[RMDB]
This 177-nucleotide RNA was probed chemically with 2A3 and DMS.
RNA sequence: GGGAACGACUCGAGUAGAGUCGAAAAGAUAUGGAGACCACUUAGCAACAGCCAGGUGUCGGAAACGACACACUGGACAUGCUAACUGGUCUCCUAAGUCAAACACCAGCCCCUUCGGGGGCUGGUGGCUUUAUCUUGGGUUCGCCCAAGAUAAAGCAAAAGAAACAACAACAACAAC
Reactivity to 2A3 in 0.01 (KOAc 150mM, MgCl2 10mM, bicine 150mM(pH8.5), 24C), signal-to-noise 1, nucleotides 027 to 126: g010a000u050a020u060g000g000a010g000a000c000c000a020c020u020u020a020g000c070a040a220c100a190g000c000c000a000g010g000u000g000u000c020g000g000a070a030a000c010g000a000c000a000c080a190c000u000g010g000a010c010a200u300g020c000u010a010a000c010u000g010g010u000c000u020c000c000u000a000a000g000u000c000a020a040a020c010a000c030c010a010g040c000c010c000c090u040u160c300g080g010g080g060g010c030u000g010g010u000g000
Reactivity to DMS in 0.01 (KOAc 150mM, MgCl2 10mM, bicine 150mM(pH8.5), 24C), signal-to-noise 1, nucleotides 027 to 126: g010a030u000a150u000g010g010a000g020a000c000c000a020c110u000u000a010g020c010a110a070c260a140g000c010c000a000g030g020u000g010u000c010g000g000a050a030a070c000g000a010c000a000c000a070c000u000g000g020a010c060a240u010g000c000u000a000a010c140u000g010g010u000c000u000c000c000u000a000a060g010u010c010a150a140a300c000a000c010c000a020g030c020c000c000c010u000u020c240g030g040g010g000g000c000u000g000g000u000g000

Reactivities are given for positions 27 through 126.